Structure probing data (2A3) for a 207-nucleotide construct. High 2A3 reactivity points to a flexible backbone, as in loops and unpaired stretches.
[RMDB]
RNA sequence: GGGAACGACUCGAGUAGAGUCGAAAAACGAGCGCGCCAAUACGGUGGCGCGCUCGAUGGAAGUAGAGACCAGUAACUACUCAAAUAAACGGGUAUAACUAAAAAACCUUAAGAGUAAGGUGUAAAAAAUACGCGUUCUAGUUCGCUAGAACGCGAAGUUCUAGUUUAGGUUCGCCUAAACUAGAACAAAAGAAACAACAACAACAAC
Reactivity to 2A3 in 0.01 (KOAc 150mM, MgCl2 10mM, bicine 150mM(pH8.5), 24C), signal-to-noise 1, nucleotides 027 to 156: a010c000g000a000g000c000g010c000g000c000c010a100a060u250a200c090g060g030u060g020g050c010g050c010g030c020u000c000g000a000u000g050g060a020a030g000u050a020g000a010g000a100c010c050a050g020u020a000a090c000u010a010c060u100c170a050a050a080u130a040a010a000c000g000g000g060u110a130u090a160a010c090u250a020a070a060a000a030a030c040c000u080u040a070a010g080a030g190u040a070a000g030g000u050g000u060a100a130a000a000a000a000u180a020c020g000c000g020u000u020c000u000a020g000u020u040c130g000c090u010a000g000a000a000c000g000c000g000a010a000
The reactions ran in a buffer of 150 mM KOAc, 10 mM MgCl2 and 150 mM bicine (pH 8.5), at 24 C. Reactivities are given for positions 27 through 156. Source: RMDB library M2RFPK, as collected in RNAgym.